[RMDB]
RNA sequence: GGGAACGACUCGAGUAGAGUCGAAAAUCCUCAGGGUUCGCCCUGAGGAAAACGCUCAACUCAUGGACCGCACGACGGAUCACCAUCGAUUCGACAUGAGAAAAAGAACUUGCUUCGGCAAGUUCAAGUACAGAUCAUCGUUCGCGAUGAUCUGUACAAAAGAAACAACAACAACAAC
Reactivity to DMS in 0.01 (KOAc 150mM, MgCl2 10mM, bicine 150mM(pH8.5), 24C), signal-to-noise 1, nucleotides 027 to 126: u000c000c000u010c000a020g030g010g000u000u000c190g000c040c020c000u020g010a050g000g000a000a010a000a040c130g020c010u000c070a170a100c010u000c000a070u000g000g000a070c060c070g000c060a190c100g030a010c080g040g000a130u000c300a090c120c100a070u000c010g000a110u000u010c070g030a300c040a030u000g000a070g000a090a060a160a150a110g000a020a000c000u010u000g000c000u000u000c300g030g000c000a000a030g000u000u000c010a000a110
Reactivity to 2A3 in 0.01 (KOAc 150mM, MgCl2 10mM, bicine 150mM(pH8.5), 24C), signal-to-noise 2, nucleotides 027 to 126: u000c010c000u020c000a000g050g010g010u010u140c160g110c000c000c000u000g000a000g010g000a040a070a010a010c040g020c010u060c030a020a140c020u000c020a020u050g040g010a060c060c000g020c060a030c080g110a010c000g000g030a090u140c030a090c170c030a110u070c070g120a150u020u060c020g040a040c000a020u060g000a000g000a100a070a020a000a020g010a000a000c000u000u000g000c000u040u050c220g090g000c000a010a000g000u020u000c000a000a010
Chemical mapping of a 177-nucleotide RNA with DMS and 2A3. DMS adducts were read by reverse transcription with MarathonRT. The 2A3 profile rests on 1,715 reads. For 2A3 the reverse transcriptase was SuperScript II with manganese.